[RMDB]
RNA sequence: GGGAACGACUCGAGUAGAGUCGAAAACGGUUCUGGUUAGGUCUGUGUAUCCCUACCAGAUACUUCCGGUAACUAGGAGUUUGUAGUGACGUAAGUUUAGUCCUAAGAGGACUCAUCAGGUAGCCUAGUGUAUACGGUCGUUCGCGACCGUAUACACAAAAGAAACAACAACAACAAC
Reactivity to DMS in 0.01 (KOAc 150mM, MgCl2 10mM, bicine 150mM(pH8.5), 24C), signal-to-noise 1, nucleotides 027 to 126: c190g010g020u000u000c010u000g000g000u000u030a030g000g000u000c060u010g010u010g010u010a030u020c070c080c000u000a070c020c000a010g000a010u000a050c060u000u000c030c010g020g010u020a030a050c050u000a060g000g030a160g010u000u000u020g050u010a060g020u000g010a040c030g000u000a050a120g000u000u010u000a040g000u000c010c000u040a060a130g000a180g010g000a000c030u000c080a060u000c090a080g010g010u000a110g000c000c050u020a090
Reactivity to 2A3 in 0.01 (KOAc 150mM, MgCl2 10mM, bicine 150mM(pH8.5), 24C), signal-to-noise 1, nucleotides 027 to 126: c050g040g010u030u040c000u020g020g060u050u160a020g060g030u040c110u110g180u050g080u170a120u070c010c000c010u000a000c020c010a020g000a070u100a100c050u040u000c010c000g000g030u100a020a050c000u010a050g070g000a070g100u110u040u100g080u020a050g030u000g080a020c020g070u080a050a100g000u000u140u110a020g010u030c010c000u070a130a000g190a050g100g010a000c000u000c000a050u000c010a000g110g040u050a020g020c010c000u010a050